[RMDB]
RNA sequence: GGGAACGACUCGAGUAGAGUCGAAAACACUUGGACUUGCUACAGGUUCAACUCCAGUAGAAUUCUACAACCAAAUCGUUAAAUCCGAUCUUGAUUUUUCAGAUAUGACUUCAGUAAACUUGGACGAUCGUCCUGAGUAUUUCGAUACUCAGGACGAAAAAGAAACAACAACAACAAC
Reactivity to 2A3 in 0.01 (KOAc 150mM, MgCl2 10mM, bicine 150mM(pH8.5), 24C), signal-to-noise 2, nucleotides 027 to 126: c020a010c030u020u030g030g000a000c000u040u050g070c020u190a090c030a090g000g030u010u010c010a040a050c030u030c020c040a030g020u000a020g090a110a110u160u010c020u080a050c010a100a030c070c020a060a120a000u030c030g020u030u050a050a070a020u010c030c050g080a070u050c040u080u120g020a060u040u130u020u000u110c020a050g020a050u110a090u180g070a050c030u080u020c090a050g040u120a050a180a170c070u030u060g010g060a030c090g010a060
Reactivity to DMS in 0.01 (KOAc 150mM, MgCl2 10mM, bicine 150mM(pH8.5), 24C), signal-to-noise 2, nucleotides 027 to 126: c150a140c180u000u000g000g000a090c060u000u000g020c090u020a110c010a040g010g000u000u000c060a070a040c130u000c000c030a030g010u000a070g000a140a110u000u000c020u020a080c060a060a070c070c040a020a040a090u000c010g010u000u010a030a110a060u000c160c100g000a030u000c080u000u000g020a030u000u020u000u020u000c040a050g010a060u000a090u030g000a040c110u010u020c050a020g010u000a030a100a090c110u000u000g000g020a080c190g010a130